[RMDB]
RNA sequence: GGGAACGACUCGAGUAGAGUCGAAAACGCCUCAAGACAAAACUACUCUCCAGUGGACGAUAGAAAUAGCAAUGAAUAGCGCACAUGCUCAGCAAGAACCACGCGGGGGCGUGACGCGAACCGACAACUUUUAGUACGCUUUCGAGCGUACUAAAAGAAAAGAAACAACAACAACAAC
Reactivity to 2A3 in 0.01 (KOAc 150mM, MgCl2 10mM, bicine 150mM(pH8.5), 24C), signal-to-noise 2, nucleotides 027 to 126: c080g080c040c000u050c030a040a060g110a100c060a060a160a070a030c030u080a030c000u020c000u010c020c030a110g040u070g070g030a020c030g030a080u070a110g120a070a170a010u090a010g040c040a030a090u130g050a100a130u100a070g010c050g030c030a080c010a130u040g000c010u020c050a050g000c000a030a050g040a110a080c060c040a040c050g060c010g160g030g000g000g050c000g000u010g000a010c020g020c010g010a010a030c010c020g020a050c030a080a020
Reactivity to DMS in 0.01 (KOAc 150mM, MgCl2 10mM, bicine 150mM(pH8.5), 24C), signal-to-noise 1, nucleotides 027 to 126: c200g050c000c020u010c150a100a110g000a120c100a080a070a030a050c010u010a120c070u000c010u000c060c050a010g010u000g000g020a060c050g020a130u000a010g010a040a070a040u010a070g000c060a050a070u000g000a090a020u000a100g000c030g030c040a070c000a060u000g000c000u000c040a140g000c060a040a070g010a060a070c070c040a070c040g000c050g000g000g000g000g000c010g040u000g020a080c040g000c020g000a070a070c030c010g000a020c130a020a100
Source: RMDB library OK2TST, as collected in RNAgym. An RNA of 177 nucleotides, treated with 2A3 and DMS and read out base by base. The reactions ran in a buffer of 150 mM KOAc, 10 mM MgCl2 and 150 mM bicine (pH 8.5), at 24 C.